An RNA of 177 nucleotides, treated with 2A3 and read out base by base. The reactions ran in a buffer of 150 mM KOAc, 10 mM MgCl2 and 150 mM bicine (pH 8.5), at 24 C.
RNA sequence: GGGAACGACUCGAGUAGAGUCGAAAAGAUAUGGACCAUUCAGGCAACAGCCACCAUUCGGAAACGAAUGUGUGGACAUGCCUGAUGGUCCUAAGUCAAAACGUCAAUGUGUUCGCACAUUGACGAACUCCUGAGGUGACUUCGGUCACCUCAGGAGAAAAGAAACAACAACAACAAC
Reactivity to 2A3 in 0.01 (KOAc 150mM, MgCl2 10mM, bicine 150mM(pH8.5), 24C), signal-to-noise 2, nucleotides 027 to 126: g000a000u040a000u040g010g010a000c000c000a040u300u300c020a010g000g000c070a300a110c110a300g010c010c000a000c000c010a010u000u010c000g030g040a000a000a010c010g040a060a000u040g210u110g000u000g100g030a000c000a040u160g000c000c010u010g010a000u020g000g000u000c000c000u000a010a000g010u010c000a000a010a160a150c000g000u000c000a000a000u030g000u000g040u060u160c260g080c130a000c010a000u000u020g000a000c000g000a020a000